This 207-nucleotide RNA was probed chemically with 2A3 and DMS.
For 2A3, 1,062 sequencing reads were counted.
The RNA was probed in 150 mM KOAc, 10 mM MgCl2 and 150 mM bicine (pH 8.5) at 24 C.

[RMDB]
RNA sequence: GGGAACGACUCGAGUAGAGUCGAAAAGUACGUAGAGUGUCGCCAAGCUCUAUAUAUGGACACUUACGAAGGGUUUUGGUUGUUUUGUAUCUCAAGCCGACUUUGAGUAUUUGAGGAAAAUACGACAUGAAUCCUGUGACGUUCGCGUCACAGGAAAACGAAUCAUUAGUUUCGACUAAUGAUUCGUAAAAGAAACAACAACAACAAC
Reactivity to 2A3 in 0.01 (KOAc 150mM, MgCl2 10mM, bicine 150mM(pH8.5), 24C), signal-to-noise 2, nucleotides 027 to 156: g090u080a030c020g030u030a030g030a040g130u050g030u070c020g020c180c010a120a080g020c020u000c060u060a090u030a000u010a050u230g050g050a010c010a020c060u010u110a030c080g070a050a040g040g010g020u050u060u150u200g040g000u000u060g000u010u060u010u020g040u020a110u080c020u010c120a040a020g010c000c010g040a050c020u020u030u070g010a040g030u010a040u000u090u110g000a050g030g070a060a050a020a050u130a000c090g020a000c050a120u170g070a080a040u040c000c010u000g000u000g000a000c020g030u050u110c300g000c010g070u000c000a000c000a000g010g000a000a000a030
Reactivity to DMS in 0.01 (KOAc 150mM, MgCl2 10mM, bicine 150mM(pH8.5), 24C), signal-to-noise 2, nucleotides 027 to 156: g010u000a040c030g060u020a030g000a060g020u000g000u000c080g000c140c110a080a300g010c010u000c050u000a030u000a080u000a070u010g010g000a170c050a080c050u000u000a120c090g010a080a150g000g010g030u000u000u000u000g010g020u000u010g000u000u000u000u000g020u010a100u010c060u000c020a070a090g010c040c040g010a050c040u000u000u010g010a210g000u000a040u000u010u000g010a130g020g020a100a030a040a080u010a020c000g000a110c060a070u010g000a070a120u000c000c000u000g040u000g000a020c020g020u010u000c280g050c040g020u010c000a000c000a010g000g010a000a010a060